Chemical mapping of a 177-nucleotide RNA with DMS and 2A3. The 2A3 profile rests on 6,610 reads. It was measured as part of the RMDB library OK1LIB. Conditions: 150 mM KOAc, 10 mM MgCl2 and 150 mM bicine (pH 8.5), 24 C.
RNA sequence: GGGAACGACUCGAGUAGAGUCGAAAAUCGACCGGGCGGUCUCUUACGGUCAGUUGAGAAGCUAGUGGCUCAGUCGGAAAUUAGAUUCUAUAUGGUUACGUGCGACAGAUUCUGCGUUUCGGCAGAAGGGUUUAAUAUACUUCGGUAUAUUAAACCCAAAAGAAACAACAACAACAAC
Reactivity to DMS in 0.01 (KOAc 150mM, MgCl2 10mM, bicine 150mM(pH8.5), 24C), signal-to-noise 4, nucleotides 027 to 126: u000c030g000a090c030c060g000g000g000c030g000g010u000c020u000c010u000u000a070c080g000g010u040c090a090g000u010u000g000a050g010a050a090g000c040u000a060g020u030g000g010c010u000c050a070g050u000c030g010g010a050a050a080u020u020a130g010a060u020u000c020u000a050u020a100u030g000g010u000u010a040c050g000u000g020c020g000a070c150a060g000a160u000u000c010u010g000c020g000u010u010u020c080g000g030c010a020g010a060a060
Reactivity to 2A3 in 0.01 (KOAc 150mM, MgCl2 10mM, bicine 150mM(pH8.5), 24C), signal-to-noise 6, nucleotides 027 to 126: u080c000g000a010c000c010g010g030g010c040g060g010u010c000u000c000u060u080a040c040g160g080u100c090a050g040u060u090g040a020g010a060a020g020c070u080a050g120u080g170g000c000u010c020a010g020u010c000g020g030a040a020a010u090u030a030g020a040u040u000c010u020a040u030a030u180g030g010u020u050a040c020g010u030g050c010g030a020c030a030g090a090u020u010c000u010g000c010g070u110u060u090c020g080g000c000a010g010a030a030